Structure probing data (2A3 and DMS) for a 177-nucleotide construct.
RNA sequence: GGGAACGACUCGAGUAGAGUCGAAAAUGAAAGCGAAAGGGAAACCAGAGGAGCUCUCUCGACGCAGGACUCGGCUUGCUGAAGCGCGCACGGCAAGAGGCGAGGGGCGGCGACUGGUGAGUACGCCUAUGCCGGAAUAGUUCGCUAUUCCGGCAUAAAAAGAAACAACAACAACAAC
Reactivity to 2A3 in 0.01 (KOAc 150mM, MgCl2 10mM, bicine 150mM(pH8.5), 24C), signal-to-noise 3, nucleotides 027 to 126: u090g030a010a050a040g100c120g020a100a100a000g030g030g030a040a000a050c000c020a020g010a040g040g080a030g070c010u000c000u000c010u030c040g010a010c030g000c050a030g060g060a050c010u010c020g040g050c030u070u060g000c020u040g020a110a060g040c020g000c000g000c070a020c020g030g050c000a020a010g040a030g050g140c020g010a040g010g010g010g000c030g030g000c010g000a040c010u020g040g000u090g020a020g010u030a030c040g000c010c010
Reactivity to DMS in 0.01 (KOAc 150mM, MgCl2 10mM, bicine 150mM(pH8.5), 24C), signal-to-noise 3, nucleotides 027 to 126: u040g000a040a110a090g010c030g030a040a100a110g000g010g000a130a120a080c060c020a060g010a170g000g020a110g000c040u010c010u010c030u010c010g010a080c060g010c080a080g040g010a100c040u010c020g000g050c000u000u010g050c000u000g010a100a080g010c040g000c000g000c050a190c000g000g000c050a020a040g010a050g000g000c040g030a050g000g020g000g000c030g030g000c020g020a040c090u000g010g000u030g010a070g010u010a060c050g020c010c020
The RNA was probed in 150 mM KOAc, 10 mM MgCl2 and 150 mM bicine (pH 8.5) at 24 C. Values cover nucleotides 27 to 126. DMS adducts were read by reverse transcription with MarathonRT. For 2A3, 2,152 sequencing reads were counted.